[RMDB]
RNA sequence: GGGAACGACUCGAGUAGAGUCGAAAAGAUAUGGAAUUCCACACGCACGCAUCGAUCUCGGAAACGAGGGAGCGUGAAGUGGAGAUUCCUAAGUCAAAACCCAGGAUAGCUUCGGCUAUCCUGGGAAGGCAAUUAUUUUGUUCGCAAAAUAAUUGCCAAAAGAAACAACAACAACAAC
Reactivity to DMS in 0.01 (KOAc 150mM, MgCl2 10mM, bicine 150mM(pH8.5), 24C), signal-to-noise 2, nucleotides 027 to 126: g000a040u000a300u010g010g000a010a010u010u000c000c000a030c010a020c230g000c000a000c000g010c010a300u010c170g000a040u010c000u000c000g010g010a090a120a170c010g010a010g000g010g000a020g020c000g010u010g000a000a040g020u000g000g010a010g010a030u010u000c000c010u000a040a090g000u000c040a080a040a120a120c000c000c000a000g000g000a030u010a010g010c000u000u020c210g010g000c000u000a000u000c000c000u000g010g010g000a010a050
Reactivity to 2A3 in 0.01 (KOAc 150mM, MgCl2 10mM, bicine 150mM(pH8.5), 24C), signal-to-noise 2, nucleotides 027 to 126: g020a030u090a060u160g000g010a000a000u010u030c010c000a000c000a010c270g070c000a000c000g010c000a200u300c140g090a090u030c020u000c010g060g000a090a060a040c020g000a010g020g020g000a020g000c000g000u010g010a030a010g000u010g000g060a110g050a030u010u000c000c000u030a120a030g060u020c030a040a050a040a240c000c000c010a000g000g000a000u000a010g010c050u080u090c300g160g000c010u020a000u000c000c010u000g000g010g000a000a000